[RMDB]
RNA sequence: GGGAACGACUCGAGUAGAGUCGAAAAAUCACCGCGAAGCUCGACGAGCUCAUCUCCGCCGUGAAGGACGGCGGCGAUAUCAACGUCACCGUCGAGGAGGGUGACGGGCCUGGUCCACUCAGCCGCGGCGGCGUCCGGCCGACCGGGGUGUGAAGCCGAACGAUCUACAUUUCGAUGUAGAUCGUUCAAAAGAAACAACAACAACAAC
Reactivity to 2A3 in 0.01 (KOAc 150mM, MgCl2 10mM, bicine 150mM(pH8.5), 24C), signal-to-noise 3, nucleotides 027 to 156: a000u030c020a020c010c010g160c030g180a140a070g090c030u010c020g050a030c040g010a010g010c010u040c070a020u000c020u010c000c000g020c000c000g020u070g100a150a100g300g080a020c000g020g000c030g000g000c000g010a000u000a030u130c070a080a060c040g110u070c090a020c120c000g020u040c020g010a070g080g050a040g010g010g010u000g010a020c000g030g020g010c000c060u050g010g000u050c030c010a070c040u020c020a020g050c000c010g150c010g090g010c040g000g020c010g070u260c120c070g090g020c030c000g200a280c000c000g030g070g010g000u050g090u070g040a050a000g030c020c030

Structure probing data (2A3) for a 207-nucleotide construct.
The 2A3 profile rests on 1,538 reads.